RNA sequence: GGGAACGACUCGAGUAGAGUCGAAAAUGAGCCAUUGCGGCAAAAGAUCUUCCACGAAAUCAAAGCGCGUACCAAGGAAACCGACUUAUCGGUGCCGACGCGACGUGGCAACUGGUGGUACUACGCGAUAUGGACCCUGAUUCGUCAGGGUCCAUAUAAAAGAAACAACAACAACAAC
Reactivity to DMS in 0.01 (KOAc 150mM, MgCl2 10mM, bicine 150mM(pH8.5), 24C), signal-to-noise 2, nucleotides 027 to 126: u010g010a290g020c030c020a130u020u020g040c090g010g020c080a090a050a110a090g010a120u000c050u000u000c000c000a080c120g010a100a110a100u010c100a060a100a190g060c000g020c300g000u010a060c090c060a140a270g010g010a040a140a040c010c020g000a070c300u010u000a100u010c000g000g030u010g020c000c050g000a060c060g000c140g050a040c090g000u000g000g000c140a080a070c030u000g000g030u000g050g040u020a020c010u000a090c070g010c030g010
Reactivity to 2A3 in 0.01 (KOAc 150mM, MgCl2 10mM, bicine 150mM(pH8.5), 24C), signal-to-noise 1, nucleotides 027 to 126: u130g000a000g060c020c020a110u130u300g110c110g000g000c000a030a050a020a190g030a020u040c050u090u020c070c010a050c170g040a080a070a120u170c080a060a120a020g000c010g010c010g010u000a060c070c050a070a040g120g000a070a080a100c010c000g090a000c060u170u250a100u290c040g000g000u040g000c000c000g040a060c000g000c080g040a010c030g030u040g000g030c010a050a080c030u040g030g050u040g010g070u070a070c020u040a020c020g000c010g000
Conditions: 150 mM KOAc, 10 mM MgCl2 and 150 mM bicine (pH 8.5), 24 C. Structure probing data (DMS and 2A3) for a 177-nucleotide construct. Reactivities are rounded to 0.1 and cut off at 0 and 3. For DMS, 959 sequencing reads were counted. For 2A3 the reverse transcriptase was SuperScript II with manganese. The data come from the RNA Mapping Database (RMDB), library OK2TST.